[RMDB]
RNA sequence: GGGAACGACUCGAGUAGAGUCGAAAAGGAGAGUAGAUGAUUCUCGUUAAGUGUGUGUGAGUGGGAUGUCCUCACACAACGAAGCGAGAGCGCGGUGAAUCAUUGCAUCAGCUCCAAAGAAAGAAAAAUUAGCAGUCGUAUUCGUACGACUGCUAAUAAAAGAAACAACAACAACAAC
Reactivity to DMS in 0.01 (KOAc 150mM, MgCl2 10mM, bicine 150mM(pH8.5), 24C), signal-to-noise 2, nucleotides 027 to 126: g000g000a040g000a020g010u020a230g010a010u000g030a040u010u010c000u010c000g000u000u000a080a180g010u040g000u000g040u000g020u020g000a000g020u050g020g000g020a060u040g010u030c020c010u000c000a040c000a060c000a030a000c010g020a210a040g000c000g000a110g000a110g000c050g000c050g000g000u020g010a140a060u000c080a000u000u010g000c050a080u020c170a100g000c000u000c010c010a080a130a120g010a090a020a050g020a030a050a120a070
Reactivity to 2A3 in 0.01 (KOAc 150mM, MgCl2 10mM, bicine 150mM(pH8.5), 24C), signal-to-noise 4, nucleotides 027 to 126: g020g000a010g000a010g010u160a030g000a030u020g010a010u010u000c000u000c010g040u050u070a130a120g010u100g010u000g000u000g000u020g150a030g020u290g000g100g060a140u140g140u170c000c000u000c000a000c000a000c000a020a000c010g000a060a010g000c000g010a040g010a020g020c010g010c010g000g120u120g070a050a020u050c010a030u000u060g010c030a040u000c030a150g030c000u020c010c010a110a030a000g130a030a130a010g130a020a120a050a010

The data come from the RNA Mapping Database (RMDB), library OK1LIB. This 177-nucleotide RNA was probed chemically with DMS and 2A3. 2A3 adducts were read by reverse transcription with SuperScript II with manganese.